[RMDB]
RNA sequence: GGGAACGACUCGAGUAGAGUCGAAAAGAUGGGUCCGAUGGAUUAAUGCGUCGCCGGCCAUUGGAUCCUGAUUGAUAGAUUGAUGGCGACGGUCGGAUCACUCGGUAAUUCGGUGCUCUACGAGUGAUCCGUGAUGAUAGUUAAGAGGAGCACCUAAAUUACGUACGUCAUUCGUGACGUACGUAAUAAAAGAAACAACAACAACAAC
Reactivity to 2A3 in 0.01 (KOAc 150mM, MgCl2 10mM, bicine 150mM(pH8.5), 24C), signal-to-noise 3, nucleotides 027 to 156: g130a030u180g000g000g000u000c010c000g000a000u010g010g000a020u100u250a250a040u300g150c020g000u000c000g000c000c010g000g000c000c000a000u000u000g000g000a000u000c000c020u040g010a010u020u180g070a040u010a100g120a070u020u300g080a140u170g030g000c000g000a000c000g000g020u000c010g010g000a000u000c000a010c020u000c000g050g100u130a090a100u200u120c050g000g000u010g000c000u020c000u000a000c000g000a000g000u000g000a000u000c000c000g000u000g020a010u050g010a010u050a180g190u200u270a090a010g060a060g120g000a000g000c000a000c000c000u000a000a020